[RMDB]
RNA sequence: GGGAACGACUCGAGUAGAGUCGAAAAGAUAUGGAGGGAUGAACUACAGCGGCGUAGACUAUACACCGAUAUGUCGGAAACGACAUAUCGGUGUACGAAUCUACCGAGCUGCAUCCCUCCUAAGUCACAGUUUGCUAAAGUUCGCUUUAGCAAACUGAAAAGAAACAACAACAACAAC
Reactivity to DMS in 0.01 (KOAc 150mM, MgCl2 10mM, bicine 150mM(pH8.5), 24C), signal-to-noise 1, nucleotides 027 to 126: g000a080u000a300u000g000g000a010g020g010g040a010u000g010a140a060c080u010a300c000a030g000c010g000g050c300g040u000a010g000a010c080u000a230u000a000c000a030c000c000g010a020u010a020u000g010u020c000g010g000a110a090a280c000g010a000c010a000u000a010u000c000g010g010u000g010u000a000c050g000a100a080u000c010u010a000c010c030g030a240g000c010u000g000c080a000u000c010c000c000u000c040c000u000a000a040g010u000c020a240